The record gives the reactivity of an RNA of 207 nucleotides to 2A3. The reactions ran in a buffer of 150 mM KOAc, 10 mM MgCl2 and 150 mM bicine (pH 8.5), at 24 C. For 2A3 the reverse transcriptase was SuperScript II with manganese. The data come from the RNA Mapping Database (RMDB), library ARCHII. 2A3 is a SHAPE reagent: it acylates the 2'-hydroxyl of flexible nucleotides of all four kinds. Values cover nucleotides 27 to 156.

[RMDB]
RNA sequence: GGGAACGACUCGAGUAGAGUCGAAAAUAAGUCUAACUCUUCGGAGCCGUCAAGCCUCACAAUGCUAACUAGUGGGGAUUUGGCGUAACUUUGUUAGCCGCUCUCUCGUCUCAUCCGAAGCGAGGGAAAAGAUUAGGAUUGCCCAUCACUUCCGCCUCGAAGGUUAUUUGUUCGCAAAUAACCUUCGAAAAGAAACAACAACAACAAC
Reactivity to 2A3 in 0.01 (KOAc 150mM, MgCl2 10mM, bicine 150mM(pH8.5), 24C), signal-to-noise 3, nucleotides 027 to 156: u150a050a040g050u010c030u030a010a050c020u030c030u120u100c090g060g030a020g050c130c000g000u000c000a030a000g020c010c000u040c000a010c010a030a120u140g090c070u180a110a100c030u070a110g000u010g000g000g010g050a060u010u000u010g010g000c000g020u000a000a000c020u100u070u110g050u090u060a030g020c010c020g050c020u010c000u010c000u000c030g190u050c070u010c080a280u130c100c100g050a070a000g000c010g010a000g000g000g000a020a110a010a000g050a060u090u140a020g030g000a030u000u130g000c020c010c010a060u140c010a020c070u190u040c020c070g100c030c010u020